The record gives the reactivity of an RNA of 177 nucleotides to DMS and 2A3. Conditions: 150 mM KOAc, 10 mM MgCl2 and 150 mM bicine (pH 8.5), 24 C. For 2A3, 23,475 sequencing reads were counted. Source: RMDB library OK1LIB, as collected in RNAgym. Reactivities are rounded to 0.1 and cut off at 0 and 3.

[RMDB]
RNA sequence: GGGAACGACUCGAGUAGAGUCGAAAAGCAUAGGGAGCCAACCUGUGUCUGUAUUUAAGCCAACACUGCCAUUGACACCAAUAUGAUAGCCACCGACACUGAUUUGAGGACUGGCAUUAAGCUUCCAUAGCGUAAUUUAGUUCGCUAAAUUACGCUAAAAAGAAACAACAACAACAAC
Reactivity to DMS in 0.01 (KOAc 150mM, MgCl2 10mM, bicine 150mM(pH8.5), 24C), signal-to-noise 7, nucleotides 027 to 126: g000c060a050u030a080g000g000g000a090g020c070c120a090a110c050c010u000g010u000g000u020c020u010g010u020a050u030u020u020a130a090g000c030c040a070a090c060a080c070u010g000c030c020a040u000u010g010a080c050a060c050c040a070a050u020a050u020g010a100u010a070g010c000c010a090c030c020g000a080c120a050c050u010g000a090u000u010u000g010a150g020g000a060c080u010g000g000c040a070u010u020a050a110g000c040u000u010c010c030a160
Reactivity to 2A3 in 0.01 (KOAc 150mM, MgCl2 10mM, bicine 150mM(pH8.5), 24C), signal-to-noise 9, nucleotides 027 to 126: g030c020a030u110a050g020g020g020a040g070c040c030a040a070c040c010u020g010u010g030u060c040u030g100u030a160u040u180u110a070a020g040c020c000a030a020c040a020c050u050g020c020c010a050u030u070g030a030c010a030c030c020a050a050u080a070u180g110a050u080a030g020c010c000a020c020c030g060a030c020a010c080u090g060a140u060u100u130g050a060g030g040a040c070u050g040g000c010a000u060u080a050a010g010c000u030u000c020c010a030